Chemical mapping of a 170-nucleotide RNA with 2A3 and DMS. The RNA was probed in 150 mM KOAc, 10 mM MgCl2 and 150 mM bicine (pH 8.5) at 24 C. The 2A3 profile rests on 6,600 reads. DMS adducts were read by reverse transcription with MarathonRT. The data come from the RNA Mapping Database (RMDB), library 15KLIB.
[RMDB]
RNA sequence: GGGAACGACUCGAGUAGAGUCGAAAAGACUGAGGGGGGUGGCUAGGACGCAGGGGACCAGUGGAGCCGUGGGAUGCUCUUCCCAAUCUGACCUGACCCCUCCCCCAGCGGGUCGCCCAGGAAUGGCUAAGCGAUGUCUUCGGACAUCGCAAAAGAAACAACAACAACAAC
Reactivity to 2A3 in 0.01 (KOAc 150mM, MgCl2 10mM, bicine 150mM(pH8.5), 24C), signal-to-noise 4, nucleotides 027 to 129: g020a020c050u030g030a260g000g030g060g000g000g000u050g010g040c000u030a060g010g020a070c110g000c040a000g000g000g010g010a040c000c090a110g080u100g030g000a000g010c000c080g060u210g020g100g000a090u150g030c020u010c020u060u030c020c000c000a020a030u000c010u000g040a000c000c000u030g070a130c000c000c020c000u040c010c000c000c000c000a020g030c010g000g020g030u010c000g020c010c000c000a010g020g070a140a130u140g030g020c070u100a050a060
Reactivity to DMS in 0.01 (KOAc 150mM, MgCl2 10mM, bicine 150mM(pH8.5), 24C), signal-to-noise 3, nucleotides 027 to 129: g000a000c000u000g030a140g000g000g040g000g000g100u050g000g060c000u030a090g050g020a050c000g060c100a020g000g000g000g000a100c300c060a140g010u030g040g020a020g020c190c070g000u040g120g000g010a060u020g050c000u030c070u010u050c000c000c000a070a270u020c060u030g040a120c000c000u000g010a000c020c040c010c000u020c040c080c010c130c020a050g020c050g010g040g050u060c010g030c000c000c000a140g020g000a150a050u060g000g030c110u010a050a110